[RMDB]
RNA sequence: GGGAACGACUCGAGUAGAGUCGAAAAUCAUCGGGGAUGCCCAGAGGCAACAGCCCAGGCUGGAGGUGCCCCAGGGAAGGGUGCUCACAGUGGUCCCAGGGCUACACUUGGCUUUGACUGCACAGCAGCCAUUUAGUCGUUUCGACGACUAAAUGGCAAAAGAAACAACAACAACAAC
Reactivity to DMS in 0.01 (KOAc 150mM, MgCl2 10mM, bicine 150mM(pH8.5), 24C), signal-to-noise 2, nucleotides 027 to 126: u010c040a080u000c060g040g010g000g000a110u000g030c030c050c000a130g010a130g000g010c070a080a060c110a040g030c000c010c050a100g010g060c040u000g000g000a150g000g000u010g000c050c020c000c060a150g010g000g040a110a140g000g010g010u000g000c030u000c080a120c060a060g000u000g020g000u020c000c030c020a190g000g000g020c030u000a060c080a120c050u000u000g000g010c110u000u010u000g000a110c050u000g010c000a070c070a070g000c110a110
Reactivity to 2A3 in 0.01 (KOAc 150mM, MgCl2 10mM, bicine 150mM(pH8.5), 24C), signal-to-noise 1, nucleotides 027 to 126: u020c000a020u080c030g020g000g000g000a020u090g050c010c010c010a020g040a070g060g020c020a030a010c010a150g020c020c020c000a050g000g080c010u040g060g050a030g000g070u030g010c000c000c000c010a040g110g030g020a040a030g040g000g020u030g000c020u050c030a090c000a010g060u110g070g080u050c020c010c010a020g070g010g000c040u070a030c020a020c050u050u060g010g030c000u130u050u090g070a080c000u060g000c020a010c000a100g060c070a010

This 177-nucleotide RNA was probed chemically with DMS and 2A3. 2A3 adducts were read by reverse transcription with SuperScript II with manganese. It was measured as part of the RMDB library OK2TST. Values cover nucleotides 27 to 126. Reactivities are rounded to 0.1 and cut off at 0 and 3. Conditions: 150 mM KOAc, 10 mM MgCl2 and 150 mM bicine (pH 8.5), 24 C. For 2A3, 1,595 sequencing reads were counted.